[RMDB]
RNA sequence: GGGAACGACUCGAGUAGAGUCGAAAAAUGAAACGAAAACAGGCGAGGCUGCGCCCUAUCGGACACUGGAAGAAGUCCGUUUCCUUAAAAGAGGGUUCAGAAUGGAUCACCUCUUGUGUCGGUGGGAUCGUGAAAAUUAGUUCGCUAAUUUUCACGAAAAAGAAACAACAACAACAAC
Reactivity to DMS in 0.01 (KOAc 150mM, MgCl2 10mM, bicine 150mM(pH8.5), 24C), signal-to-noise 3, nucleotides 027 to 126: a100u000g000a070a070a120c080g010a080a050a070a130c090a100g010g020c050g020a060g000g010c070u000g010c080g000c060c010c010u000a020u000c020g010g000a030c000a040c040u000g000g000a020a040g000a090a230g020u000c010c010g020u000u000u000c010c010u000u020a070a120a070a100g000a040g000g010g010u010u000c170a140g000a060a070u000g010g000a020u000c040a130c070c010u000c010u000u000g010u000g020u000c010g000g030u000g000g000g010a140
Reactivity to 2A3 in 0.01 (KOAc 150mM, MgCl2 10mM, bicine 150mM(pH8.5), 24C), signal-to-noise 2, nucleotides 027 to 126: a000u160g020a040a000a020c080g030a070a030a020a070c040a010g040g030c020g060a020g110g000c030u070g020c050g030c010c000c000u030a040u020c020g070g000a010c000a010c030u030g010g000a030a040g020a050a020g040u020c000c020g010u000u020u010c010c000u080u040a070a230a050a000g090a020g030g000g000u090u100c030a030g140a170a070u090g020g010a020u030c020a040c060c000u000c000u010u020g020u020g000u000c020g000g020u020g050g010g000a070
Structure probing data (DMS and 2A3) for a 177-nucleotide construct. Values cover nucleotides 27 to 126. The 2A3 profile rests on 3,217 reads.